The record gives the reactivity of an RNA of 177 nucleotides to 2A3. For 2A3, 436 sequencing reads were counted. Conditions: 150 mM KOAc, 10 mM MgCl2 and 150 mM bicine (pH 8.5), 24 C.
[RMDB]
RNA sequence: GGGAACGACUCGAGUAGAGUCGAAAAAUGAACAUCGUUAAUGGUGGUUCUCACUCAGAUGCUCCAAUUGCAUUCCAAGAAUUCAUGAUUUUACCUGUAGGUGCUACAACGUUCAAAGAAUCAUUACCCGUAAGGGCGUCUUCGGACGCCCUUACGGAAAAGAAACAACAACAACAAC
Reactivity to 2A3 in 0.01 (KOAc 150mM, MgCl2 10mM, bicine 150mM(pH8.5), 24C), signal-to-noise 2, nucleotides 027 to 126: a000u090g000a010a010c010a020u070c030g050u180u300a300a050u210g000g000u000g000g060u120u000c010u030c020a010c000u080c080a040g030a150u000g060c060u040c010c010a000a080u090u210g100c040a030u020u000c000c020a000a060g030a300a150u090u140c030a000u040g110a080u210u070u000u130a060c000c000u000g110u190a000g020g210u280g090c000u000a020c030a060a000c060g020u070u030c100a160a050a110g040a070a000u000c000a070u000u130a080c000